[RMDB]
RNA sequence: GGGAACGACUCGAGUAGAGUCGAAAAGAAAGAAAGAAGCGAGCUGGCGCAGCCGCACGGGCAACCGUCAAUCCAGCACUUCACAAGACUUGUCGUUCUGACAGGACAUCCAUCAACCCACCGGGAAAAAAGGACUACAGCUUCGGCUGUAGUCCAACAAGUAAGAUUAGUUCGCUAAUCUUACUUGAAAAGAAACAACAACAACAAC
Reactivity to 2A3 in 0.01 (KOAc 150mM, MgCl2 10mM, bicine 150mM(pH8.5), 24C), signal-to-noise 3, nucleotides 027 to 156: g030a010a040a000g040a040a060a000g030a030a000g030c070g060a030g010c040u010g040g010c050g010c070a020g090c040c080g070c040a030c020g020g000g000c040a020a050c040c010g010u030c020a000a030u030c000c000a000g050c050a070c030u090u050c050a080c040a150a070g030a040c010u000u010g010u020c010g080u190u120c080u160g040a010c000a000g010g020a020c020a070u050c060c000a040u060c030a070a100c010c010c010a040c090c090g000g040g080a040a100a020a030a020a070g020g000a030c000u010a000c000a000g020c000u050u140c170g050g000c010u000g010u000a010g000u010c000c000a000a000
Reactivity to DMS in 0.01 (KOAc 150mM, MgCl2 10mM, bicine 150mM(pH8.5), 24C), signal-to-noise 1, nucleotides 027 to 156: g000a100a080a210g000a160a160a240g010a070a050g040c000g020a110g020c020u000g010g070c070g020c130a280g020c040c040g000c140a050c180g020g040g030c080a070a090c070c030g110u000c030a070a140u000c010c000a090g040c020a060c050u020u000c000a080c120a130a170g000a110c010u020u000g010u000c010g010u000u000c070u070g000a140c010a040g030g000a160c100a030u010c000c010a140u010c050a060a230c020c000c020a090c010c070g000g040g000a000a010a030a120a070a050g000g020a030c000u000a000c010a010g030c010u000u000c300g020g030c000u010g040u000a000g000u010c030c010a000a040